[RMDB]
RNA sequence: GGGAACGACUCGAGUAGAGUCGAAAAGUAUAGUCCAGUCCACCCAGGAAGGGGGUCCAAUGAAGUACGGGGAAAUUCAGCUCAUCCCCUAGGGCAUUGGAGGGAAGUGCACUACAAGAAAAGUGCCCUCGGUAGAAACGGCCAGCAGCCGCGGUAACUAUAUGGUAUGCUUCGGCAUACCAUAUAGAAAAGAAACAACAACAACAAC
Reactivity to 2A3 in 0.01 (KOAc 150mM, MgCl2 10mM, bicine 150mM(pH8.5), 24C), signal-to-noise 2, nucleotides 027 to 156: g020u040a030u150a180g040u010c040c040a010g050u020c010c030a050c000c020c000a020g020g060a020a140g010g000g000g020g020u010c020c020a020a030u030g000a020a000g030u060a010c100g000g000g000g030a000a090a050u230u120c070a070g060c050u040c040a050u050c020c000c000c000u060a020g000g000g010c000a010u000u020g030g000a010g030g000g020a070a060g020u050g050c030a020c010u080a040c080a130a030g100a100a150a040a000g040u010g020c000c020c000u020c000g030g000u080a040g090a020a090a020c000g010g000c010c020a030g010c030a010g000c050c020g030c010g030g020u010a100a000
Reactivity to DMS in 0.01 (KOAc 150mM, MgCl2 10mM, bicine 150mM(pH8.5), 24C), signal-to-noise 2, nucleotides 027 to 156: g010u000a110u000a090g000u010c040c010a140g020u010c070c000a070c020c000c030a180g020g040a100a060g000g020g000g010g000u000c020c020a030a050u000g010a000a050g000u000a120c240g000g000g070g010a050a070a120u000u000c140a090g000c190u000c110a300u000c020c010c000c000u060a150g000g010g010c000a040u000u000g010g000a130g000g000g030a100a080g000u010g010c020a080c040u000a130c060a100a150g000a110a050a080a070g020u000g000c000c000c010u010c020g000g000u000a060g010a110a100a050c030g010g000c010c010a170g010c080a290g010c010c030g000c010g030g010u010a050a150